[RMDB]
This 207-nucleotide RNA was probed chemically with 2A3.
RNA sequence: GGGAACGACUCGAGUAGAGUCGAAAAGCGCUCGCGCGUCAGAACUACGACGGCACAAAGAAGCUGCUCGACAAGCUCGCGCCGUCGGCCGCGUUCUCGACCGGUGAGAUCGGUCAUUCCGUCGACGUCGCACCCACCGAUGACGUUCGCGAAAGCGAUGCCCAAAGUUGUUCGCAACUUUGGGCAUAAAAGAAACAACAACAACAAC
Reactivity to 2A3 in 0.01 (KOAc 150mM, MgCl2 10mM, bicine 150mM(pH8.5), 24C), signal-to-noise 1, nucleotides 027 to 156: g020c000g000c070u000c010g010c010g000c010g050u040c000a000g040a150a070c020u120a100c200g010a000c040g020g000c070a020c120a190a110a010g180a030a000g010c000u020g000c040u090c090g110a150c070a090a000g020c000u130c060g040c020g000c000c000g010u020c010g000g040c060c030g030c090g040u060u010c040u030c100g010a060c040c000g010g050u170g100a220g000a090u160c000g000g000u040c030a060u100u100c000c000g030u050c010g020a000c000g020u100c030g000c070a130c000c060c000a030c000c110g060a120u030g030a020c080g060u200u300c020g030c000g070a000a070a000g020c000g000
About this RNA
The data come from the RNA Mapping Database (RMDB), library OK3TST. 2A3 adducts were read by reverse transcription with SuperScript II with manganese.